[RMDB]
RNA sequence: GGGAACGACUCGAGUAGAGUCGAAAAGAUAUUACCUUUAAUGCUAGGUUGGAAAUUGGUGUACCAAUAUCAUUGAGCAAAUUGGAUGUCGGGACUGAUUUAGCGAUUGCUUCAGCUAAACUUAAUACCCAUGUGUAACAUUCGUGUUACACAUGGGAAAAGAAACAACAACAACAAC
Reactivity to 2A3 in 0.01 (KOAc 150mM, MgCl2 10mM, bicine 150mM(pH8.5), 24C), signal-to-noise 5, nucleotides 027 to 126: g050a010u110a060u130u240a170c020c000u050u090u150a120a040u100g030c030u020a020g000g090u040u030g050g040a070a110a130u080u070g090g030u070g040u110a170c000c000a020a010u040a040u110c110a080u050u120g040a020g030c050a020a080a090u050u030g020g000a010u020g010u030c030g020g020g030a030c040u020g040a090u040u000u050a020g020c010g090a130u030u170g050c030u080u070c030a020g020c010u070a030a010a060c040u080u120a100a040u100a230
Reactivity to DMS in 0.01 (KOAc 150mM, MgCl2 10mM, bicine 150mM(pH8.5), 24C), signal-to-noise 5, nucleotides 027 to 126: g010a100u010a090u000u000a110c030c010u000u010u000a100a130u010g010c040u000a050g000g000u000u010g000g010a050a100a100u010u000g010g000u000g010u000a140c040c030a030a050u010a090u000c060a080u010u010g010a080g020c050a040a060a080u010u000g000g000a080u000g010u000c020g010g000g000a160c090u000g000a090u000u000u000a030g010c010g020a080u000u000g010c130u000u000c070a090g010c040u010a010a050a070c130u000u010a070a080u000a180

The record gives the reactivity of an RNA of 177 nucleotides to 2A3 and DMS. The reactions ran in a buffer of 150 mM KOAc, 10 mM MgCl2 and 150 mM bicine (pH 8.5), at 24 C. For DMS, 5,167 sequencing reads were counted. 2A3 adducts were read by reverse transcription with SuperScript II with manganese.